Chemical mapping of a 177-nucleotide RNA with DMS and 2A3. 2A3 adducts were read by reverse transcription with SuperScript II with manganese.

RNA sequence: GGGAACGACUCGAGUAGAGUCGAAAACGAUAUAUAUAUCGUAGCCGUACGAUCGUAAUCGUAAUCGCGGCGCGCUACGGCCGGCCGAUAUGCAUCGGCAUUAGCUAGCUACGAUUAAUCGAUAUGCAUCGGAAAGACACUUCGGUGUCUUUCCGAUAAAAGAAACAACAACAACAAC
Reactivity to DMS in 0.01 (KOAc 150mM, MgCl2 10mM, bicine 150mM(pH8.5), 24C), signal-to-noise 1, nucleotides 027 to 126: c000g010a030u000a040u020a140u000a080u000a040u000c000g000u040a110g000c020c050g010u020a080c090g000a030u010c180g020u000a110a050u000c040g000u000a020a000u000c040g040c020g010g030c000g040c230g030c000u010a000c110g000g000c000c070g020g000c250c030g010a070u020a090u010g000c090a060u000c000g010g000c000a040u000u000a030g010c070u010a160g010c010u000a050c000g000a010u000u020a050a090u000c050g000a070u000a090u020g010c180
Reactivity to 2A3 in 0.01 (KOAc 150mM, MgCl2 10mM, bicine 150mM(pH8.5), 24C), signal-to-noise 1, nucleotides 027 to 126: c010g000a010u010a000u000a000u000a020u000a000u130c010g020u000a020g090c040c030g050u160a090c050g040a020u080c050g120u120a070a070u030c000g050u000a040a010u070c030g010c020g050g040c020g010c000g000c010u010a020c020g000g010c010c050g040g070c000c120g130a150u110a070u300g020c100a050u140c000g020g020c020a000u010u040a010g050c050u000a000g000c010u030a000c000g000a000u010u060a050a070u120c010g000a000u000a010u150g030c000